An RNA of 207 nucleotides, treated with 2A3 and read out base by base. The data come from the RNA Mapping Database (RMDB), library ARCHII.
RNA sequence: GGGAACGACUCGAGUAGAGUCGAAAAUGCGGGAGCUGGAUCUGUGUGAAUGGUCGGUCGUGCCUAGGGCUGAUCAGAGAUCGGCCGCCCGUCCCAAGGGGCCACCAGGUCUGGGUGGGAUGAUGGAAGUCGUCGCAUCCGGACAUCUGAAGAAGCGGUUCUGCUUAUAGUUCGCUAUAAGCAGAACAAAAGAAACAACAACAACAAC
Reactivity to 2A3 in 0.01 (KOAc 150mM, MgCl2 10mM, bicine 150mM(pH8.5), 24C), signal-to-noise 2, nucleotides 027 to 156: u240g000c000g000g000g020a050g020c060u120g070g060a030u000c030u010g110u050g040u080g250a170a080u030g030g010u000c010g000g040u000c020g030u040g080c030c020u080a100g020g030g000c000u000g010a030u000c010a010g020a000g000a100u000c000g030g000c040c050g180c030c000c000g020u010c000c010c000a030a070g020g000g000g000c040c030a060c020c000a030g030g000u000c010u010g020g000g000u000g050g000g010a020u010g010a010u030g040g130a150a090g020u000c000g010u000c030g000c140a000u000c000c010g010g010a000c000a030u060c010u080g040a130a100g040a070a000g090c080g080